[RMDB]
Chemical mapping of a 207-nucleotide RNA with DMS and 2A3.
Reactivities are given for positions 27 through 156.
RNA sequence: GGGAACGACUCGAGUAGAGUCGAAAAUGUAUAAGUAGAAAGAGACAAGAAUAAUUACCUGAGUUUCCAUUCCUUAUUGUCUGGGUGUUUGCCUGAGGAUAAUGCCCUUUCAUGAUGUGAUGCCCUGUUCAAUCAUUACGAUAGUAAACCAAGUUAAGAGUCAUAUAGUCUUCGGACUAUAUGACUCAAAAGAAACAACAACAACAAC
Reactivity to DMS in 0.01 (KOAc 150mM, MgCl2 10mM, bicine 150mM(pH8.5), 24C), signal-to-noise 1, nucleotides 027 to 156: u000g020u020a200u020a120a160g000u000a130g010a050a130a120g010a210g020a120c060a060a130g000a190a160u040a100a120u000u000a060c080c010u000g010a090g000u000u010u010c050c010a200u000u000c040c030u000u020a070u010u000g010u000c010u000g030g000g060u010g040u010u000u010g020c030c000u000g010a080g040g000a110u010a050a050u000g000c010c020c030u020u000u000c030a090u000g020a170u000g000u020g000a070u000g000c010c030c000u000g040u000u000c060a030a110u010c070a050u020u000a080c070g000a110u000a110g000u000a060a070a140c050c030a020a130g020u010u000a080a290
Reactivity to 2A3 in 0.01 (KOAc 150mM, MgCl2 10mM, bicine 150mM(pH8.5), 24C), signal-to-noise 3, nucleotides 027 to 156: u150g010u010a100u020a120a070g040u070a020g070a050a100a010g060a020g000a020c060a090a010g120a150a070u210a150a050u100u080a030c010c010u090g020a030g040u020u050u020c020c000a020u040u060c040c000u120u050a080u090u120g020u030c040u040g000g020g020u030g030u040u020u080g040c010c030u040g060a030g000g010a050u020a090a040u110g010c000c000c000u000u000u060c040a040u040g020a000u040g010u030g060a040u090g030c010c000c000u010g050u040u100c080a110a110u040c020a010u030u110a030c020g120a090u070a050g060u150a030a050a080c050c020a060a010g220u130u170a100a040

For DMS, 2,203 sequencing reads were counted. For DMS the reverse transcriptase was MarathonRT. For 2A3, 1,041 sequencing reads were counted. 2A3 adducts were read by reverse transcription with SuperScript II with manganese.